[RMDB]
RNA sequence: GGGAACGACUCGAGUAGAGUCGAAAAACGUACCGAUGCAUUGAUCAUCAUUGUCUCUGAAGAGAAUGGUUAUGUAUCACUAUCCCGCGAUGGAAUUUUGACUCGCGGAGUCAAGAUGGAUAGAUUCAGGUUGGAACGAGUUCGCUCGUUCCAACCUAAAAGAAACAACAACAACAAC
Reactivity to DMS in 0.01 (KOAc 150mM, MgCl2 10mM, bicine 150mM(pH8.5), 24C), signal-to-noise 1, nucleotides 027 to 126: a090c140g020u010a170c080c140g000a020u000g040c020a000u020u020g020a020u010c040a000u000c170a180u020u010g020u000c000u020c050u020g040a150a120g010a040g010a090a030u000g000g000u000u000a020u000g020u000a010u000c000a190c070u010a050u000c010c000c030g010c040g000a090u020g000g010a110a030u000u000u000u000g000a040c020u010c010g010c180g040g000a000g000u010c000a020a010g040a030u000g000g020a050u010a030g010a190u020u000c070
Reactivity to 2A3 in 0.01 (KOAc 150mM, MgCl2 10mM, bicine 150mM(pH8.5), 24C), signal-to-noise 1, nucleotides 027 to 126: a020c100g010u100a000c040c090g000a000u000g000c000a000u000u180g030a010u060c020a020u000c010a040u010u270g210u020c010u000c000u140g250a300a190g020a040g010a040a000u000g000g010u000u010a000u010g000u010a020u020c020a010c030u030a070u040c040c000c010g000c070g150a100u210g090g080a110a080u020u000u030u080g040a030c000u000c020g300c170g210g000a000g020u010c000a000a000g010a020u040g130g000a020u040a040g090a040u000u250c100
Background
Chemical mapping of a 177-nucleotide RNA with DMS and 2A3. The data come from the RNA Mapping Database (RMDB), library OK2TRN. For DMS the reverse transcriptase was MarathonRT. For 2A3, 788 sequencing reads were counted. The RNA was probed in 150 mM KOAc, 10 mM MgCl2 and 150 mM bicine (pH 8.5) at 24 C.